RNA sequence: GGGAACGACUCGAGUAGAGUCGAAAAUCAAGAGGAUAUGGGGAAACACAACCUCAUCGGCUGGUGAUGGUGCUGCUCAGUCAAGGCUCAUUGGUGCUAUCAUAGGGGGCGUGGCGCUUGGCGUAGCUCUAUCCAGCCCAUUCGUGGGCUGGAUAGAAAAAGAAACAACAACAACAAC
Reactivity to 2A3 in 0.01 (KOAc 150mM, MgCl2 10mM, bicine 150mM(pH8.5), 24C), signal-to-noise 1, nucleotides 027 to 126: u120c020a040a010g030a020g100g000a000u010a050u200g020g000g010g000a010a190a000c110a020c030a080a090c000c050u020c040a060u060c010g050g070c080u110g030g050u030g040a070u000g080g000u070g000c050u020g020c020u000c060a020g050u020c060a030a040g050g000c020u020c070a050u000u070g060g000u070g070c000u070a030u110c030a090u170a180g000g000g040g000g030c000g000u010g010g000c000g010c020u030u020g030g020c030g010u000a000g010c020
Reactivity to DMS in 0.01 (KOAc 150mM, MgCl2 10mM, bicine 150mM(pH8.5), 24C), signal-to-noise 2, nucleotides 027 to 126: u010c100a120a050g010a110g000g020a110u000a080u010g010g000g010g010a100a100a120c150a080c160a070a070c030c000u000c030a030u010c080g020g020c050u010g000g020u000g020a070u010g000g040u000g040c070u000g010c080u000c060a050g000u020c080a070a080g000g010c020u000c060a120u010u000g010g000u000g030c110u000a050u010c070a100u010a100g010g000g010g000g010c050g040u000g000g000c090g010c110u000u000g010g000c030g030u010a050g000c160